This 207-nucleotide RNA was probed chemically with 2A3 and DMS. Values cover nucleotides 27 to 156. 2A3 adducts were read by reverse transcription with SuperScript II with manganese. Values are in units of 0.01, from 0 to 300, in steps of 10.
RNA sequence: GGGAACGACUCGAGUAGAGUCGAAAAGUGGUGCGCGGAGAGGGUAACCACCGGCGCGCGUCACUGAUAUAUCCACCGGGGGGUAAGGGGAGAAAAGGAUACAGCGCGACGAAGUUAGCACCCUGCCGAAAUGUACCCACAUUCGUGUGGGUACAAACAAUUGUUGGUAAUUCGUUACCAACAAUUGAAAAGAAACAACAACAACAAC
Reactivity to 2A3 in 0.01 (KOAc 150mM, MgCl2 10mM, bicine 150mM(pH8.5), 24C), signal-to-noise 2, nucleotides 027 to 156: g010u000g000g000u010g000c020g010c000g060g080a190g040a090g130g040g000u070a080a070c040c000a030c040c050g070g060c000g000c000g010c000g010u000c000a000c010u000g000a000u030a060u060a050u130c050c050a080c120c010g000g000g000g010g000g020u040a030a070g020g060g000g020a060g050a010a110a020a010g030g000a010u070a160c020a050g010c050g000c020g060a060c020g040a090a030g040u080u070a030g040c020a050c000c000c050u040g020c000c000g030a100a080a010u050g000u000a000c000c040c000a000c010a010u040u120c220g060u010g000u010g010g000g000u000a000c000a000a000a000
Reactivity to DMS in 0.01 (KOAc 150mM, MgCl2 10mM, bicine 150mM(pH8.5), 24C), signal-to-noise 2, nucleotides 027 to 156: g020u000g000g010u000g000c000g060c010g030g000a180g000a120g020g010g000u010a070a170c130c080a120c010c020g030g010c020g000c000g070c020g030u000c040a040c010u020g020a090u010a070u000a090u000c040c020a170c020c060g020g030g000g030g030g000u000a050a110g010g010g010g000a120g000a080a030a110a110g020g010a150u000a070c060a080g000c040g020c040g030a120c030g020a100a120g000u010u000a110g040c040a060c020c000c010u000g000c000c010g000a030a090a190u000g010u000a010c000c000c010a010c010a070u000u020c210g020u000g060u000g000g010g010u000a010c010a010a090a120